[RMDB]
RNA sequence: GGGAACGACUCGAGUAGAGUCGAAAAAGAGGAGAUAUAUUAAUAUGCCCUCCCCUUUGUUAUGCGACCUUGCCGCGAUGGGUGGGCAUAAUCCAUUAGCCUAUAUGAUGGAAACCAAAGGCGUAAAACCGACGUAUAGUUUCGACUAUACGUCGGUAAAAGAAACAACAACAACAAC
Reactivity to DMS in 0.01 (KOAc 150mM, MgCl2 10mM, bicine 150mM(pH8.5), 24C), signal-to-noise 2, nucleotides 027 to 126: a080g000a100g020g010a070g000a100u000a080u000a100u000u010a130a240u000a020u000g000c010c000c000u000c100c000c000c120u000u010u000g020u010u000a060u000g030c040g010a070c050c240u010u010g020c040c030g000c040g000a070u010g000g000g020u000g010g010g000c000a000u000a000a080u000c010c000a050u000u000a090g020c030c020u000a070u000a110u000g000a020u000g000g000a060a090a110c080c070a030a040a100g020g000c040g010u020a010a020a090
Reactivity to 2A3 in 0.01 (KOAc 150mM, MgCl2 10mM, bicine 150mM(pH8.5), 24C), signal-to-noise 2, nucleotides 027 to 126: a000g120a030g050g090a110g010a040u120a020u000a040u210u290a150a120u090a050u150g050c030c000c000u030c040c000c000c010u080u140u120g120u170u220a110u250g000c000g000a180c030c120u100u180g060c040c010g020c030g030a050u050g030g050g000u010g030g000g000c000a000u020a010a020u040c010c000a010u010u060a010g020c010c020u120a100u000a040u250g050a020u000g030g090a100a030a000c060c030a070a040a010g010g020c030g000u100a000a130a050
Source: RMDB library OK2TST, as collected in RNAgym. This 177-nucleotide RNA was probed chemically with DMS and 2A3. For DMS the reverse transcriptase was MarathonRT. Reactivities are rounded to 0.1 and cut off at 0 and 3.